[RMDB]
RNA sequence: GGGAACGACUCGAGUAGAGUCGAAAAAUACAGUACGAAAGUACAAAGAAGCAAUCAAACCGACCAGUGAAAUGAUGGCUUCAGUCCAAAAUGGGCAAACACUGCAGACGGAGCCAAAGGCAAAUAAUCUACACCAUUGAUUCGUCAAUGGUGUAGAAAAAGAAACAACAACAACAAC
Reactivity to 2A3 in 0.01 (KOAc 150mM, MgCl2 10mM, bicine 150mM(pH8.5), 24C), signal-to-noise 3, nucleotides 027 to 126: a000u150a030c030a020g020u000a010c000g010a080a020a060g030u020a010c000a000a070a000g060a010a010g000c030a020a070u060c020a090a050a070c010c030g090a070c060c020a050g080u050g140a030a060a190u110g030a030u040g000g000c000u000u010c010a030g030u000c010c000a000a080a020a300u180g000g030g000c000a000a070a010c060a040c110u100g000c020a010g010a070c020g070g000a010g000c000c010a040a020a030g020g010c020a050a060a000u150a020a050
Reactivity to DMS in 0.01 (KOAc 150mM, MgCl2 10mM, bicine 150mM(pH8.5), 24C), signal-to-noise 4, nucleotides 027 to 126: a080u030a070c140a150g010u010a010c020g000a130a090a170g010u000a000c020a060a100a120g010a040a030g000c070a060a040u000c020a040a080a100c110c050g000a120c080c070a080g010u010g030a100a050a120u000g000a040u000g010g020c010u010u000c030a080g020u010c020c040a040a050a070a110u020g020g000g010c090a070a050a090c070a020c070u000g000c090a050g000a060c080g010g000a050g020c020c030a030a040a070g000g010c110a030a050a070u000a080a120